[RMDB]
RNA sequence: GGGAACGACUCGAGUAGAGUCGAAAAGGAACAGUCAUAGAUUUGGUCGCACAUUAUUCAAUCUAAUGUAUACUUUUUGUAAUGAUGAGUGGAAUAAAUGGGAAGGAGAAUUUGGUGUUUUUGUCAAAUUGCAACGUGGAUCAUGGAACAAAGUCAACCUAAGGUGCAGGUUCGCCUGCACCUUAGGAAAAGAAACAACAACAACAAC
Reactivity to DMS in 0.01 (KOAc 150mM, MgCl2 10mM, bicine 150mM(pH8.5), 24C), signal-to-noise 1, nucleotides 027 to 156: g030g000a110a120c050a090g000u000c040a110u000a090g000a080u020u010u010g010g010u010c040g070c080a090c000a070u000u000a010u000u020c030a060a100u000c130u010a050a100u000g040u000a090u000a080c020u010u000u000u000u030g030u000a020a060u000g000a060u000g010a090g000u010g020g000a030a070u000a000a080a210u000g020g000g000a070a090g030g010a110g030a020a140u000u000u010g000g010u000g000u000u000u000u000u000g010u000c060a020a090a080u000u000g010c060a060a050c100g030u010g000g050a090u000c100a070u010g000g040a110a090c030a020a020a110g020u000c050a050a140
Reactivity to 2A3 in 0.01 (KOAc 150mM, MgCl2 10mM, bicine 150mM(pH8.5), 24C), signal-to-noise 2, nucleotides 027 to 156: g020g000a020a040c030a070g070u120c070a030u040a040g100a070u050u000u230g040g020u040c050g060c030a010c000a060u000u140a050u200u200c010a020a100u000c020u150a030a030u040g080u060a120u040a070c020u020u050u080u120u110g060u060a070a070u060g040a070u030g010a000g040u070g040g000a040a030u040a070a100a110u070g010g000g010a000a020g030g020a010g010a010a100u060u020u010g010g000u020g000u070u030u000u090u090g070u000c030a020a020a100u090u070g000c000a030a040c040g010u010g000g010a020u080c010a010u040g030g000a020a020c010a060a010a060g170u300c030a070a100